[RMDB]
Conditions: 150 mM KOAc, 10 mM MgCl2 and 150 mM bicine (pH 8.5), 24 C. Chemical mapping of a 177-nucleotide RNA with 2A3 and DMS. For 2A3, 1,641 sequencing reads were counted. Reactivities are given for positions 27 through 126. For DMS the reverse transcriptase was MarathonRT. The data come from the RNA Mapping Database (RMDB), library 15KREP.

RNA sequence: GGGAACGACUCGAGUAGAGUCGAAAAACUUGUUUCGGACCCAUAGUCCGAAAGAUCUUUGUUGAUGGCGUGCCAUUUGUAGUAUCUUGUGGUUAUCACUACAAAGAAUUAGGUUUAGUCAUGAAUACAAGACCUAUAUGUUCGCAUAUAGGUCUUGAAAAGAAACAACAACAACAAC
Reactivity to 2A3 in 0.01 (KOAc 150mM, MgCl2 10mM, bicine 150mM(pH8.5), 24C), signal-to-noise 2, nucleotides 027 to 126: a000c010u040u080g010u060u030u000c010g000g000a000c000c010c140a190u220a040g000u000c000c010g000a000a000a010g040a020u030c040u050u090u110g050u010u040g070a090u000g000g030c040g030u070g010c020c010a030u000u010u050g050u000a040g020u010a020u040c030u050u160g070u140g130g060u100u060a010u080c060a000c010u020a000c010a020a030a020g060a050a090u190u150a060g020g010u030u050u220a040g000u010c010a030u040g080a060a000u070a090
Reactivity to DMS in 0.01 (KOAc 150mM, MgCl2 10mM, bicine 150mM(pH8.5), 24C), signal-to-noise 5, nucleotides 027 to 126: a050c070u000u000g000u000u000u000c000g000g000a020c010c130c270a150u010a150g010u000c000c010g000a010a010a030g000a090u000c050u000u000u010g020u000u000g000a050u000g010g010c090g000u010g010c010c000a150u000u000u000g010u000a050g010u010a060u000c050u000u010g020u010g010g010u010u010a060u000c110a030c010u000a010c000a010a010a020g000a090a130u010u020a070g020g010u000u000u000a110g020u010c030a040u010g000a060a050u010a170